The record gives the reactivity of an RNA of 177 nucleotides to DMS. DMS adducts were read by reverse transcription with MarathonRT. Conditions: 150 mM KOAc, 10 mM MgCl2 and 150 mM bicine (pH 8.5), 24 C.
RNA sequence: GGGAACGACUCGAGUAGAGUCGAAAAAAAGAUAUGGAUCAUGCAAAGUGGAGCUCUACGAAACCUAUAUCGGAAACGAUAUAGGAUAAGUAGAGCGUUGAAACUUUGCCGCUGAUCCUAAGUCAAACUCCCUAAUAGGGUUCGCCCUAUUAGGGAGAAAAGAAACAACAACAACAAC
Reactivity to DMS in 0.01 (KOAc 150mM, MgCl2 10mM, bicine 150mM(pH8.5), 24C), signal-to-noise 2, nucleotides 027 to 126: a070a050a050g010a020u020a300u000g010g010a010u000c000a010u020g000c000a010a010a000g000u010g010g000a120g000c000u000c000u010a000c010g000a140a150a150c000c010u000a000u000a000u000c000g020g000a140a090a260c000g000a000u010a020u000a000g000g000a000u000a020a300g000u000a020g000a010g010c000g030u000u020g040a110a100a060c000u000u000u000g030c020c030g010c000u000g020a000u000c000c000u020a000a130g000u000c040a080a110a180